Chemical mapping of a 207-nucleotide RNA with DMS and 2A3.
Reactivities are given for positions 27 through 156.
RNA sequence: GGGAACGACUCGAGUAGAGUCGAAAAGCGGGGCUUGAAACGCGGGUAGCGCGCUCGCCCGGCGAAGAAGUUCGCAUACGCGGUGUGCUGGUGCCGAAGUGUCUGCUGCAACGGCACGCUCGACACCUAGAACAUACCGUAUUCGUACGGUAUGUAAUGACAUUUAUCGUUUCGACGAUAAAUGUCAAAAAGAAACAACAACAACAAC
Reactivity to DMS in 0.01 (KOAc 150mM, MgCl2 10mM, bicine 150mM(pH8.5), 24C), signal-to-noise 1, nucleotides 027 to 156: g030c050g000g000g050g000c040u000u120g000a060a120a060c020g000c010g010g000g050u000a170g030c000g040c030g050c010u000c010g020c000c000c020g050g040c030g000a050a300g020a120a160g000u000u000c020g000c070a110u000a130c040g020c040g000g030u000g010u010g000c020u000g010g020u000g030c000c020g050a010a110g020u000g020u000c040u000g000c080u010g000c120a090a180c120g000g000c000a020c010g000c050u010c000g010a080c000a020c020c010u000a110g030a120a130c000a000u000a000c000c000g040u030a000u000u000c210g000u000a020c060g000g030u000a020u000g000u000a020a110
Reactivity to 2A3 in 0.01 (KOAc 150mM, MgCl2 10mM, bicine 150mM(pH8.5), 24C), signal-to-noise 2, nucleotides 027 to 156: g010c030g010g010g010g000c070u070u090g040a050a050a030c030g010c050g000g040g080u120a070g130c060g000c010g000c020u020c020g030c000c000c000g020g000c000g000a030a020g060a060a050g100u080u080c010g000c070a040u080a160c090g000c050g090g000u050g010u010g040c040u030g040g000u000g000c000c020g010a090a090g030u070g020u150c080u120g090c050u040g000c040a060a000c030g020g000c000a010c020g000c040u000c040g020a020c020a020c000c000u020a010g050a070a000c000a000u000a000c000c000g000u010a020u060u070c130g040u060a000c000g000g000u020a010u000g010u020a040a090

The 2A3 profile rests on 1,305 reads. As a SHAPE reagent, 2A3 marks flexible, mostly unpaired nucleotides at the ribose 2'-OH.